[RMDB]
This 177-nucleotide RNA was probed chemically with DMS. DMS adducts were read by reverse transcription with MarathonRT. For DMS, 847 sequencing reads were counted. Conditions: 150 mM KOAc, 10 mM MgCl2 and 150 mM bicine (pH 8.5), 24 C.
RNA sequence: GGGAACGACUCGAGUAGAGUCGAAAAGAUAUGGACCGGAAUAGACAUGCCUAGUCGGAAACGACAGGGCAACAGCUAUUUCGGUCCUAAGUCAAAACAGCAAGGUGGGUUCGCCCACCUUGCUGAAUCGUUUCAUAGGGUUCGCCCUAUGAAACGAAAAAGAAACAACAACAACAAC
Reactivity to DMS in 0.01 (KOAc 150mM, MgCl2 10mM, bicine 150mM(pH8.5), 24C), signal-to-noise 1, nucleotides 027 to 126: g010a060u010a300u030g000g010a030c000c000g000g000a000a000u000a010g000a200c080a250u000g000c000c000u040a090g070u000c000g000g020a020a170a130c000g020a000c000a300g010g000g010c000a000a040c300a120g000c000u000a010u000u010u000c020g010g020u000c000c000u000a000a040g000u020c030a090a150a080a210c010a010g000c000a000a020g000g020u000g010g000g010u000u000c220g000c010c000c020a010c000c000u020u000g000c000u000g000a000a030